[RMDB]
RNA sequence: GGGAACGACUCGAGUAGAGUCGAAAAGGCGUCUUCGCUGCCUCGGCCGCCUUGCACUGACCGGUAGCCGCCGUAAUAGCGGCAUUGUUCCCAUAAACGGAUGUGGGUGUGGGUGGCGAAGUAGCAGCGUAAUACGCACGUUCGCGUGCGUAUUACGAAAAGAAACAACAACAACAAC
Reactivity to DMS in 0.01 (KOAc 150mM, MgCl2 10mM, bicine 150mM(pH8.5), 24C), signal-to-noise 2, nucleotides 027 to 126: g010g030c110g010u000c040u010u020c050g000c010u000g020c020c030u010c070g030g020c030c000g000c000c010u000u020g050c050a020c030u000g000a060c020c020g010g020u000a100g010c000c000g030c000c020g010u010a140a110u010a080g010c000g020g030c000a060u000u010g000u000u000c000c000c000a150u000a060a100a100c050g000g010a130u010g030u000g010g010g010u000g030u010g000g010g010u000g020g050c020g030a020a040g020u000a100g030c030a140g010
Reactivity to 2A3 in 0.01 (KOAc 150mM, MgCl2 10mM, bicine 150mM(pH8.5), 24C), signal-to-noise 1, nucleotides 027 to 126: g100g020c060g070u030c060u100u030c060g010c000u010g010c000c020u030c020g200g100c000c010g010c000c000u080u280g000c010a010c020u030g110a090c020c000g000g020u040a010g010c000c000g000c000c010g000u050a070a010u090a140g020c000g090g000c000a000u010u130g000u020u020c010c010c010a010u070a020a170a010c010g020g020a060u160g090u140g230g020g060u040g000u050g020g000g030u010g020g020c010g040a010a010g000u060a010g000c010a000g050